[RMDB]
RNA sequence: GGGAACGACUCGAGUAGAGUCGAAAACGUGCGCCUUGUCCCACACGUCGCAAAGGCUCUGGUAGCGCGCGGCCAUUUCGGCGAUGGCUUGCGCAUCGUCAAUCGUGCCGCUCAGCCAUUUACGCGAGUUUUACUACUCAUUCGUGAGUAGUAAAACAAAAGAAACAACAACAACAAC
Reactivity to DMS in 0.01 (KOAc 150mM, MgCl2 10mM, bicine 150mM(pH8.5), 24C), signal-to-noise 9, nucleotides 027 to 126: c100g020u000g010c110g000c030c040u000u000g010u000c020c010c010a140c160a100c130g010u010c030g020c040a070a090a100g010g000c020u000c100u000g010g010u000a070g030c100g010c270g020c000g000g000c010c020a090u000u010u000c130g020g010c030g010a020u000g000g000c030u010u000g020c090g010c000a010u000c020g020u000c040a050a050u000c140g000u010g010c020c010g010c020u000c070a110g010c010c030a090u000u000u000a080c110g000c050g010a110
Reactivity to 2A3 in 0.01 (KOAc 150mM, MgCl2 10mM, bicine 150mM(pH8.5), 24C), signal-to-noise 9, nucleotides 027 to 126: c030g040u060g020c050g020c010c030u080u110g040u040c010c020c010a020c010a000c040g100u040c020g010c050a070a060a040g030g000c020u020c070u100g130g030u110a040g040c010g000c010g000c000g050g000c010c010a080u080u110u130c120g020g000c010g010a010u010g070g140c000u080u240g050c130g000c030a010u020c010g030u020c010a020a060u080c080g060u130g040c040c010g000c010u020c030a020g010c000c010a090u080u110u100a080c100g010c010g010a020